[RMDB]
RNA sequence: GGGAACGACUCGAGUAGAGUCGAAAAGAUAUGGAGCCGUAACAUCGUGGUCUCUGAUGACCGUCAUAGAGAGCUUCGGAAACGAAGCUCUCUAUGACGCAAGGAGCUACACGUGGGCUCCUAAGUCGGUACUAAUAAACUUCGGUUUAUUAGUACCAAAAGAAACAACAACAACAAC
Reactivity to DMS in 0.01 (KOAc 150mM, MgCl2 10mM, bicine 150mM(pH8.5), 24C), signal-to-noise 4, nucleotides 027 to 126: g010a080u020a300u010g010g000a040g040c000c000g000u000a080a120c160a060u020c040g020u010g000g000u010c020u010c000u000g010a160u020g000a130c300c000g000u000c000a010u000a010g000a030g000a030g010c000u020u000c010g020g010a120a100a270c010g000a010a010g000c000u010c000u000c010u000a010u000g000a000c000g000c020a020a160g000g020a010g020c220u010a280c010a010c070g030u010g010g000g000c000u010c000c000u000a010a070g000u010c120

The record gives the reactivity of an RNA of 177 nucleotides to DMS. For DMS the reverse transcriptase was MarathonRT. The reactions ran in a buffer of 150 mM KOAc, 10 mM MgCl2 and 150 mM bicine (pH 8.5), at 24 C.